[RMDB]
RNA sequence: GGGAACGACUCGAGUAGAGUCGAAAACAACGCAGUCGCAGACUUAAGCGAAAUUGCUGAUCUCGCUAGAGCGGCUGGAUAUGAUGUGAGCAAUACCCUUACACAAUCGCGGGAAGAGGAUGCAGCAUAUCACUUUGGCGAGGGAAAGAUAGAAGCAACCAGAGUAGUUCUUCGGAACUACUCUGGUAAAAGAAACAACAACAACAAC
Reactivity to DMS in 0.01 (KOAc 150mM, MgCl2 10mM, bicine 150mM(pH8.5), 24C), signal-to-noise 1, nucleotides 027 to 156: c020a090a030c100g040c030a020g030u000c000g000c030a140g000a180c080u000u000a140a090g050c030g000a020a050a080u020u000g020c000u020g020a150u000c090u020c000g020c090u000a050g020a180g050c030g010g000c010u000g000g000a080u000a100u020g000a070u000g020u010g030a120g000c060a140a180u000a230c040c010c020u000u000a090c020a020c020a140a080u000c140g040c080g010g000g020a070a080g000a110g020g030a090u000g000c010a070g070c010a030u000a160u000c030a070c030u000u000u010g060g070c060g010a030g010g000g010a100a040a110g020a140u000a070g010a120a030g030c020a140
Reactivity to 2A3 in 0.01 (KOAc 150mM, MgCl2 10mM, bicine 150mM(pH8.5), 24C), signal-to-noise 3, nucleotides 027 to 156: c050a020a020c040g010c040a010g040u040c000g000c040a050g040a290c140u210u150a140a060g000c010g020a060a060a070u100u070g000c080u100g060a070u040c000u000c040g050c020u020a010g020a000g060c030g040g010c060u080g010g020a050u050a040u130g110a040u070g060u050g040a030g030c070a050a120u190a260c000c010c000u050u110a050c090a050c060a120a270u180c110g000c080g090g060g060a050a060g030a030g030g010a020u110g010c010a010g030c020a030u030a030u140c060a050c070u060u060u060g020g020c010g050a000g010g000g010a010a130a060g020a000u140a050g050a050a000g040c040a010